[RMDB]
RNA sequence: GGGAACGACUCGAGUAGAGUCGAAAACAGAGCCGACUAAGCACCUUGGUGCGGCUGCAGACGGGUAUCCGGCUCGACGUUCAUACAUCACGACUUCUUUCCUUUUACCUUGUUUGUUGCUGCUCCUAUUGGUUUUAAAAGGCGACUUCGGUCGCCAGUCGGUUGUACAGUUCGCUGUACAACCGACAAAAGAAACAACAACAACAAC
Reactivity to 2A3 in 0.01 (KOAc 150mM, MgCl2 10mM, bicine 150mM(pH8.5), 24C), signal-to-noise 1, nucleotides 027 to 156: c030a020g030a030g080c020c010g070a090c070u130a130a000g150c060a040c060c020u070u070g000g010u020g000c040g000g020c000u000g010c000a000g000a030c010g000g000g030u050a040u050c110c020g010g000c010u030c020g010a000c010g020u010u040c100a110u140a300c040a090u140c080a110c120g000a000c000u070u000c000u030u080u050c020c000u050u060u000u110a060c000c000u110u300g020u020u030u000g050u050u030g050c000u000g030c000u030c000c000u020a080u060u120g000g040u020u110u070u140a060a180a060a050g010g000c010g010a000c010u050u100c190g040g000u000c030g020c020c010a010